[RMDB]
An RNA of 207 nucleotides, treated with 2A3 and DMS and read out base by base. The reactions ran in a buffer of 150 mM KOAc, 10 mM MgCl2 and 150 mM bicine (pH 8.5), at 24 C. For 2A3 the reverse transcriptase was SuperScript II with manganese.

RNA sequence: GGGAACGACUCGAGUAGAGUCGAAAAGAAUAAGGGCAAGGAAGUUAUUUUAGUAUCAUCGGGAGCGAUGGGAUUUGGACUAGAUAUUUUGAAAAUGGAAAAACGUCCGACCAAUCUUGCUAAACAACAGGCAGUUUCCAGUGUUGGUCAGGUAGCAGCAUAAAUUAAUCUUCGGAUUAAUUUAUGCAAAAGAAACAACAACAACAAC
Reactivity to 2A3 in 0.01 (KOAc 150mM, MgCl2 10mM, bicine 150mM(pH8.5), 24C), signal-to-noise 3, nucleotides 027 to 156: g060a020a080u180a080a070g000g020g000c030a020a010g000g060a000a030g010u040u050a130u120u130u040u070a050g040u090a090u170c070a030u100c070g050g050g060a050g040c040g030a040u050g000g010g030a040u070u050u140g040g000a000c000u030a010g030a100u060a150u110u110u120u120g120a080a070a050a060u090g030g030a010a070a040a040a000c050g050u000c000c020g010a030c020c000a020a020u040c030u060u080g000c010u050a060a080a070c030a020a010c020a030g020g080c020a020g030u020u060u000c060c020a020g000u020g020u110u050g000g030u040c040a040g020g050u080a040g040c050a000
Reactivity to DMS in 0.01 (KOAc 150mM, MgCl2 10mM, bicine 150mM(pH8.5), 24C), signal-to-noise 2, nucleotides 027 to 156: g000a100a140u000a050a100g010g000g040c040a060a120g050g000a070a100g000u000u020a080u000u030u000u000a100g030u000a090u000c040a070u010c080g010g030g000a150g000c040g030a100u000g000g010g030a110u000u000u010g040g000a160c030u000a070g000a050u000a030u010u010u000u000g020a040a060a090a130u010g010g000a050a020a060a030a090c090g010u000c020c020g050a060c020c010a040a060u020c020u010u010g040c020u000a090a050a060c020a000a070c060a100g010g000c060a090g000u000u000u000c020c010a100g030u000g000u010u010g000g020u030c060a040g000g030u000a090g010c080a190